An RNA of 207 nucleotides, treated with DMS and 2A3 and read out base by base. It was measured as part of the RMDB library M2RFPK. The reactions ran in a buffer of 150 mM KOAc, 10 mM MgCl2 and 150 mM bicine (pH 8.5), at 24 C.

RNA sequence: GGGAACGACUCGAGUAGAGUCGAAAACCAUUCCUUAUACCUUGAGUAUUGCUGAAUUCAGUUUAGCGUGCAUGCUCUUGGCUAUUCUCAUAGUGACUGUCAAAUUUGGAGUUACUUAUUCGUCAAUAAAACACUACCACGUUCGCGUGGUAGUGAACAGAAUGUACGACUUCGGUCGUACAUUCUGAAAAGAAACAACAACAACAAC
Reactivity to DMS in 0.01 (KOAc 150mM, MgCl2 10mM, bicine 150mM(pH8.5), 24C), signal-to-noise 1, nucleotides 027 to 156: c020c030a250u010u000c020c050u000u000a170u000a030c010c000u000u000g020a060g030u000a040u000u000g000c000u050g000a100a110u020u010c110a240g030u000u000u000a050g040c060g010u000g010c090a180u010g000c010u000c020u000u000g040g050c020u000a100u000u010c050u000c020a130u000a040g000u000g000a030c010u000g020u000c090a050a120a240u000u000u010g020g000a110g010u000u000a020c030u010u000a140u010u000c100g000u010c070a020a060u000a060a100a110a220c000a030c000u000a020c000c000a000c010g000u000u000c240g030c020g030u010g010g010u020a000g010u000g000a030a050
Reactivity to 2A3 in 0.01 (KOAc 150mM, MgCl2 10mM, bicine 150mM(pH8.5), 24C), signal-to-noise 6, nucleotides 027 to 156: c020c010a040u050u060c030c030u180u130a050u050a100c020c000u020u020g010a010g020u020a050u250u200g000c000u000g030a160a130u240u220c110a210g170u090u090u130a050g010c070g040u060g090c020a010u030g000c000u000c000u010u000g020g000c000u020a040u110u080c070u010c040a110u100a050g030u000g010a000c000u030g110u260c060a100a210a300u190u140u180g040g000a020g000u010u030a020c010u080u090a120u230u220c130g080u040c120a100a100u110a180a070a010a000c000a000c010u000a000c000c000a010c010g000u030u020c170g030c010g120u000g000g000u000a000g000u000g000a010a000